[RMDB]
RNA sequence: GGGAACGACUCGAGUAGAGUCGAAAAGGUCAAAGGGAAAUGAAGGGAAGAAGCCAGGGGGCAGUUAACCACCUUACAAAGGGUAGUUUGCAAGGAAUGGUAAGGACAUAAACCAGACUGAGGAAGGUCAAGGAGAAUCAAAUGAGGAGCUGAAGAGUAUUUAUCUUACAUUCGUGUAAGAUAAAUAAAAAGAAACAACAACAACAAC
Reactivity to 2A3 in 0.01 (KOAc 150mM, MgCl2 10mM, bicine 150mM(pH8.5), 24C), signal-to-noise 3, nucleotides 027 to 156: g060g010u060c040a050a040a060g010g000g040a030a090a070u130g030a060a070g000g010g000a030a010g020a010a000g040c040c080a050g010g000g000g020g010c000a010g010u010u010a020a010c010c000a020c010c000u080u060a030c080a040a080a020g020g010g010u030a030g080u020u040u050g010c030a070a040g020g010a090a100u050g010g010u050a040a020g020g000a010c020a070u140a030a050a000c020c000a020g020a050c010u020g010a020g050g000a010a010g000g020u030c020a010a050g030g010a040g030a060a060u050c030a060a000a130u120g010a020g000g010a020g000c050u040g050a050a000g040a040g030
Structure probing data (2A3) for a 207-nucleotide construct. The RNA was probed in 150 mM KOAc, 10 mM MgCl2 and 150 mM bicine (pH 8.5) at 24 C. The data come from the RNA Mapping Database (RMDB), library OK3TST.